[RMDB]
RNA sequence: GGGAACGACUCGAGUAGAGUCGAAAAUUCAAUAUCAUUGUUCUGUCCGGAAGACAGCUUAUACUGAUAUCUAUGGUAAUUUAAAGUAAGGCUGAUUAUAUAACACGAUUUUUGUGAACUUGUCAUCAAAGUCAACCAGAUUCGUCUGGUUGACUUUAAAAGAAACAACAACAACAAC
Reactivity to 2A3 in 0.01 (KOAc 150mM, MgCl2 10mM, bicine 150mM(pH8.5), 24C), signal-to-noise 2, nucleotides 027 to 126: u070u030c020a040a030u040a000u220c060a060u000u110g030u140u050c030u020g060u030c040c040g140g020a020a020g030a060c000a000g020c000u020u220a220u020a170c000u080g020a000u010a020u150c100u150a060u100g090g080u190a040a190u070u110u060a100a080a010g000u010a010a010g000g000c000u000g040a020u110u040a030u030a040u040a070a020c070a020c010g100a090u040u130u100u110u090g020u000g020a000a030c000u000u050g070u070c000a110u000c070
Reactivity to DMS in 0.01 (KOAc 150mM, MgCl2 10mM, bicine 150mM(pH8.5), 24C), signal-to-noise 3, nucleotides 027 to 126: u000u020c050a120a090u020a070u000c040a040u020u000g020u000u000c040u000g000u020c020c040g020g000a230a150g010a080c000a000g030c110u000u000a090u010a020c090u010g000a070u010a040u000c050u040a070u010g020g040u010a040a130u020u000u020a070a100a070g020u010a010a080g010g040c020u020g000a090u010u000a080u010a060u020a070a090c060a040c110g010a070u010u000u040u010u000g000u000g000a040a110c210u000u000g020u000c060a040u000c140

The data come from the RNA Mapping Database (RMDB), libraries RFM100 and RFMREP. Chemical mapping of a 177-nucleotide RNA with 2A3 and DMS.